[RMDB]
RNA sequence: GGGAACGACUCGAGUAGAGUCGAAAACGCUGGGACAAUGUACACAGGUCAGGGAGCUGAAGCGCGCACGGCGAAGAACUGAUAUUGGUGUACGAUGUCCUGUGCUGAAGCGCGCACGGCAACCGAAAGGUGCGACAGAGCUGGUUCGCCAGCUCAAACUCAAAGCUAUGUUCGCAUAGCUUUGAGUAAAAGAAACAACAACAACAAC
Reactivity to 2A3 in 0.01 (KOAc 150mM, MgCl2 10mM, bicine 150mM(pH8.5), 24C), signal-to-noise 7, nucleotides 027 to 156: c040g010c010u080g010g000g010a000c010a030a120u190g000u010a000c000a010c010a030g120g070u010c000a010g010g020g020a040g020c000u030g040a210a030g020c010g000c010g000c020a030c040g000g010c020g080a170a040g020a080a060c000u010g010a010u060a220u250u270g200g000u020g000u020a000c010g040a060u040g010u000c010c010u020g020u030g000c030u070g020a100a040g010c010g000c000g000c010a010c030g030g000c030a060a080c010c010g030a070a020a020g010g000u020g010c010g010a020c060a100g000a000g000c000u010g020g020u110u130c250g060c070c000a000g000c000u000c000a020a040
Reactivity to DMS in 0.01 (KOAc 150mM, MgCl2 10mM, bicine 150mM(pH8.5), 24C), signal-to-noise 3, nucleotides 027 to 156: c040g050c040u000g010g010g020a040c020a080a110u010g020u010a020c000a010c040a160g010g020u010c010a080g010g000g030a200g030c000u030g010a020a040g020c000g000c030g010c000a300c040g000g000c020g030a170a110g010a080a260c010u010g010a050u000a140u010u000g010g010u010g020u000a010c000g000a140u000g010u010c000c000u000g000u040g010c000u000g000a090a080g000c030g000c030g050c020a250c020g010g000c030a080a190c010c010g000a090a110a190g050g000u000g020c010g020a160c110a120g000a060g000c000u010g010g000u000u000c270g000c030c000a010g010c020u000c000a030a080